RNA sequence: GGGAACGACUCGAGUAGAGUCGAAAACGGUGCUGAAGCCGGCGACAGUUGCCCGAGUCAGCCACUUUCAAAAUUUGUUGGUUAAGUAACUUAGUAGCUUAGCUUCGGAUUUUCGUAACAAAUUUGCGUAUUCGUAAGAGUUCGCUCUUACGAAUACAAAAGAAACAACAACAACAAC
Reactivity to DMS in 0.01 (KOAc 150mM, MgCl2 10mM, bicine 150mM(pH8.5), 24C), signal-to-noise 2, nucleotides 027 to 126: c070g040g000u000g010c100u010g000a090a150g030c010c300g000g000c030g010a040c070a130g000u000u020g010c010c010c040g000a010g000u010c010a070g020c060c060a130c200u010u010u010c080a060a020a030a030u010u010u000g010u010u000g000g000u000u000a010a060g000u000a120a110c160u040u010a160g020u010a160g000c000u000u000a020g000c000u000u000c010g010g020a050u000u000u010u000c120g000u000a030a040c150a050a030a120u000u010u000g010c300
Reactivity to 2A3 in 0.01 (KOAc 150mM, MgCl2 10mM, bicine 150mM(pH8.5), 24C), signal-to-noise 2, nucleotides 027 to 126: c020g000g020u090g030c140u160g060a120a040g030c040c000g000g030c010g020a020c030a080g120u200u070g060c000c010c000g000a000g010u020c000a050g020c040c050a010c020u100u250u160c100a080a050a020a010u050u010u060g040u050u070g050g020u000u010a000a020g010u020a060a010c050u110u250a090g020u090a020g200c020u040u000a000g040c000u020u000c020g070g000a070u030u000u040u100c120g040u000a040a040c030a030a090a040u070u030u060g040c040

Chemical mapping of a 177-nucleotide RNA with DMS and 2A3. 2A3 adducts were read by reverse transcription with SuperScript II with manganese. Reactivities are given for positions 27 through 126. The 2A3 profile rests on 1,411 reads. The RNA was probed in 150 mM KOAc, 10 mM MgCl2 and 150 mM bicine (pH 8.5) at 24 C. It was measured as part of the RMDB library RFMREP.